[RMDB]
The record gives the reactivity of an RNA of 177 nucleotides to 2A3 and DMS. Source: RMDB library TTRDES, as collected in RNAgym. Values cover nucleotides 27 to 126. The RNA was probed in 150 mM KOAc, 10 mM MgCl2 and 150 mM bicine (pH 8.5) at 24 C.

RNA sequence: GGGAACGACUCGAGUAGAGUCGAAAAGAUAUGGAGUGCGGUAGACAUGAAGGUCGUCGGAAACGACGACCCUUCAACAGCUAUACACUCCUAAGUCAAAACCUGAGAGCCUUCGGGCUCUCAGGAAUCCAAGAAGCAAGUUCGCUUGCUUCUUGGAAAAAGAAACAACAACAACAAC
Reactivity to 2A3 in 0.01 (KOAc 150mM, MgCl2 10mM, bicine 150mM(pH8.5), 24C), signal-to-noise 1, nucleotides 027 to 126: g010a000u030a010u060g010g000a010g000u010g020c290g140g030u060a010g030a150c160a300u300g010a020a010g040g000u040c000g030u000c010g000g020a000a000a010c000g000a000c000g010a010c060c000c000u030u010c000a180a150c070a030g010c000u010a010u000a050c010a010c000u000c000c010u000a030a000g000u020c040a040a070a140a260c000c000u000g000a000g010a000g000c040c000u100u140c300g080g010g000c000u010c000u000c010a010g000g000a020a000
Reactivity to DMS in 0.01 (KOAc 150mM, MgCl2 10mM, bicine 150mM(pH8.5), 24C), signal-to-noise 2, nucleotides 027 to 126: g010a010u000a110u030g010g000a030g040u000g010c090g020g040u000a010g030a080c220a140u030g000a050a010g010g000u000c000g050u000c000g000g000a020a010a040c040g000a000c010g000a000c190c110c000u000u000c000a170a070c250a100g000c010u010a000u000a170c010a020c000u000c000c000u000a000a090g010u000c000a150a130a200a130c000c000u000g000a000g000a020g040c000c000u000u000c180g030g000g020c000u000c000u000c000a010g000g000a020a010